This 207-nucleotide RNA was probed chemically with DMS and 2A3. Values cover nucleotides 27 to 156. 2A3 adducts were read by reverse transcription with SuperScript II with manganese. The RNA was probed in 150 mM KOAc, 10 mM MgCl2 and 150 mM bicine (pH 8.5) at 24 C.
RNA sequence: GGGAACGACUCGAGUAGAGUCGAAAAGAAAGAAAGAAAGAAAGGUAUGAAGUCCUAUUCACUCUAGAUAGGAUAAACUUCAUAUUGAUCGUGUAUGUGCUAACGCACAUACACGAAUGCGCAUGCAGAACUGCAUGCAUGAACAUAUAGGGUGCAAUAUAUUAGGUAGUUUCGACUACCUAAUAUAAAAAGAAACAACAACAACAAC
Reactivity to DMS in 0.01 (KOAc 150mM, MgCl2 10mM, bicine 150mM(pH8.5), 24C), signal-to-noise 5, nucleotides 027 to 156: g010a130a070a080g000a130a070a100g020a130a100a140g000a130a130a210g010g010u000a010u000g000a030a040g020u000c010c020u000a010u000u000c050a100c170u000c140u010a080g010a050u000a010g000g000a120u000a050a130a080c020u010u000c010a020u000a030u000u000g020a110u000c000g040u000g000u000a010u000g020u010g020c010u010a100a190c300g000c000a010c010a010u000a000c000a000c000g010a000a030u010g010c060g000c000a010u000g010c010a060g000a070a180c150u000g020c040a070u010g010c000a030u000g000a030a060c060a060u000a120u000a150g000g000g010u000g000c030a080a150
Reactivity to 2A3 in 0.01 (KOAc 150mM, MgCl2 10mM, bicine 150mM(pH8.5), 24C), signal-to-noise 8, nucleotides 027 to 156: g050a000a070a000g050a060a080a010g060a050a110a010g070a060a100a020g050g000u020a010u010g000a000a000g010u010c010c000u000a000u020u040c050a020c030u020c010u020a000g000a010u000a000g020g010a010u080a050a080a020c000u000u000c000a000u010a010u030u060g030a030u020c000g000u000g000u000a000u000g020u010g020c070u160a130a040c200g000c010a010c000a000u000a000c000a000c000g000a000a010u040g020c030g000c010a000u000g000c000a010g070a300a080c190u080g000c000a010u000g000c000a010u100g050a040a030c070a030u120a010u010a140g020g000g000u050g040c030a130a040